[RMDB]
RNA sequence: GGGAACGACUCGAGUAGAGUCGAAAAGAUAUGGAUUCAUGUGGGACAUGCCUGAUGGUCGGAAACGACCAAUAGGCAACAGCCCAAUGAAUCCUAAGUCAAAAUCUGUACUCUUCGGAGUACAGAAGGAAACUAUGUACUUCGGUACAUAGUUUCCAAAAGAAACAACAACAACAAC
Reactivity to DMS in 0.01 (KOAc 150mM, MgCl2 10mM, bicine 150mM(pH8.5), 24C), signal-to-noise 2, nucleotides 027 to 126: g010a000u020a070u010g010g000a000u000u000c000a010u000g000u020g000g010g000a010c140a090u010g020c000c000u000g000a060u010g010g020u000c000g000g010a010a000a060c000g010a000c000c000a000a010u010a020g010g020c000a050a030c180a190g030c020c000c000a070a010u000g000a020a000u010c000c000u000a010a040g010u010c010a200a100a140a130u000c020u000g000u000a020c000u000c000u010u000c300g000g000a010g000u010a000c000a000g010a070a050
Reactivity to 2A3 in 0.01 (KOAc 150mM, MgCl2 10mM, bicine 150mM(pH8.5), 24C), signal-to-noise 2, nucleotides 027 to 126: g010a010u010a010u060g000g000a020u000u000c000a000u050g090u160g300g000g050a070c180a280u300g000c000c000u040g040a100u030g030g030u000c010g000g010a010a000a010c000g000a000c000c000a000a020u020a000g020g010c000a050a020c090a010g000c000c000c000a010a000u010g000a010a010u010c000c000u000a000a000g000u010c020a030a010a030a300u050c000u000g010u010a000c000u040c010u080u120c300g180g010a000g020u010a000c000a000g000a020a030
This 177-nucleotide RNA was probed chemically with DMS and 2A3.